[RMDB]
RNA sequence: GGGAACGACUCGAGUAGAGUCGAAAAGAUAUGGAAUCCGAAGCAAUUAAAUAACAACGAUAAGGUCAAUGUCGGAAACGACAUCGACCUUUUGACGUUGUGUUUAAUUGCUUCGGAUUCCUAAGUCCUAUUUAACCUCGUUCGCGAGGUUAAAUAGAAAAGAAACAACAACAACAAC
Reactivity to DMS in 0.01 (KOAc 150mM, MgCl2 10mM, bicine 150mM(pH8.5), 24C), signal-to-noise 3, nucleotides 027 to 126: g000a140u010a300u010g010g020a020a000u000c000c000g000a020a010g010c000a020a020u000u000a010a000a010u000a110a050c010a010a020c000g020a200u010a030a010g030g020u010c000a050a010u000g010u000c000g010g010a110a100a220c000g010a010c000a000u000c020g000a010c000c000u000u000u000u000g010a170c070g010u000u000g010u000g000u000u000u000a000a010u000u000g010c010u000u000c010g000g010a000u000u000c000c000u000a020a090g010u000c040
The record gives the reactivity of an RNA of 177 nucleotides to DMS.
Conditions: 150 mM KOAc, 10 mM MgCl2 and 150 mM bicine (pH 8.5), 24 C.
For DMS, 4,046 sequencing reads were counted.
The data come from the RNA Mapping Database (RMDB), library TTRINS.
Values cover nucleotides 27 to 126.
DMS adducts were read by reverse transcription with MarathonRT.